[RMDB]
RNA sequence: GGGAACGACUCGAGUAGAGUCGAAAAGCUUAAUAACCUGCGCUGAGCCCUUCUCCCCCAGCUUGCCUGUGUCCUAAGGAAUUGGAAGGUCAUCCUUCACAGGAUCGUGUGGAAGUCCUGCUCGGGGUCCAAACAUGGUAAUUCGUUACCAUGUUAACUGGAUCAAGUUAUUCGUAACUUGAUCCAGAAAAGAAACAACAACAACAAC
Reactivity to DMS in 0.01 (KOAc 150mM, MgCl2 10mM, bicine 150mM(pH8.5), 24C), signal-to-noise 2, nucleotides 027 to 156: g000c060u020u000a120a080u010a080a070c050c020u000g010c080g010c030u000g010a120g010c010c000c040u010u000c070u000c020c010c000c010c010a100g020c060u000u000g000c020c020u000g020u000g020u020c050c030u010a060a080g030g010a050a110u010u010g040g010a130a070g010g020u010c060a090u000c010c010u010u020c040a060c040a040g020g000a050u010c050g030u000g010u040g010g010a100a090g000u000c020c030u010g030c030u000c030g020g000g030g000u010c020c040a090a060a020c000a000u010g000g010u010a010a070u000u000c280g020u000u000a000c000c000a000u000g010u010u000a020a130
Reactivity to 2A3 in 0.01 (KOAc 150mM, MgCl2 10mM, bicine 150mM(pH8.5), 24C), signal-to-noise 3, nucleotides 027 to 156: g010c010u090u110a110a010u080a210a130c010c050u130g010c030g020c040u080g050a050g030c000c000c000u140u070c110u120c030c000c000c000c000a000g000c000u050u120g010c010c000u010g010u040g000u100c010c030u070a060a000g030g040a110a070u120u010g080g020a080a030g030g030u090c070a070u120c020c000u020u050c020a020c000a030g000g020a060u100c050g050u100g020u040g090g040a020a050g040u030c010c010u000g010c010u000c010g020g010g020g000u010c020c040a000a020a000c000a000u000g000g000u000a000a030u020u020c050g010u000u000a000c000c000a000u000g000u010u010a010a010
Source information:
Conditions: 150 mM KOAc, 10 mM MgCl2 and 150 mM bicine (pH 8.5), 24 C. This 207-nucleotide RNA was probed chemically with DMS and 2A3. The DMS profile rests on 3,685 reads.